[RMDB]
RNA sequence: GGGAACGACUCGAGUAGAGUCGAAAAAGUUCUAGUCCUCACCUAAGAUCAGACUGACAUGGCCCUCAAAGUAAGAGCACUGGGUUGGGCUUUGUGGUGGGGAUAAGUGUCUCAUUUUUAGUCCCAAAUUAAAAACGAGAUUUUGGGCUGUACAUCAUCCCAAAAUUAUGUUCGCAUAAUUUUGGGAAAAAGAAACAACAACAACAAC
Reactivity to 2A3 in 0.01 (KOAc 150mM, MgCl2 10mM, bicine 150mM(pH8.5), 24C), signal-to-noise 3, nucleotides 027 to 156: a000g050u090u060c020u030a020g030u010c010c000u000c000a010c010c010u090a130a010g020a150u080c050a030g120a230c080u170g000a000c010a030u030g010g000c000c000c010u010c040a100a080a020g030u050a090a080g050a040g180c050a010c050u030g010g080g110u090u050g040g000g030c000u030u020u050g020u010g000g010u000g000g000g000g000a000u030a010a020g000u000g000u010c000u000c060a090u080u130u040u040u170a010g080u130c000c020c000a020a060a000u050u040a060a080a060a010a030c110g010a090g000a140u050u010u000u050g000g000g000c010u030g020u080a060c050a100u090c030a040
Reactivity to DMS in 0.01 (KOAc 150mM, MgCl2 10mM, bicine 150mM(pH8.5), 24C), signal-to-noise 3, nucleotides 027 to 156: a080g000u010u000c030u000a240g010u000c010c000u000c010a050c010c020u000a080a080g020a130u000c070a110g020a070c050u000g010a130c040a100u000g010g010c010c040c010u010c040a100a100a150g010u000a100a090g010a080g010c050a060c060u000g000g020g040u010u000g010g020g020c010u000u000u010g030u000g010g040u000g010g030g040g020a010u010a010a080g020u000g020u000c010u010c010a090u000u000u000u030u000a070g020u010c040c120c110a080a070a100u000u000a010a010a030a050a030c000g000a070g000a090u000u000u000u000g020g040g040c050u000g020u000a080c110a130u000c070a300
Annotation
An RNA of 207 nucleotides, treated with 2A3 and DMS and read out base by base. Conditions: 150 mM KOAc, 10 mM MgCl2 and 150 mM bicine (pH 8.5), 24 C. The data come from the RNA Mapping Database (RMDB), library OK3TST. 2A3 is a SHAPE reagent: it acylates the 2'-hydroxyl of flexible nucleotides of all four kinds. The DMS profile rests on 7,564 reads.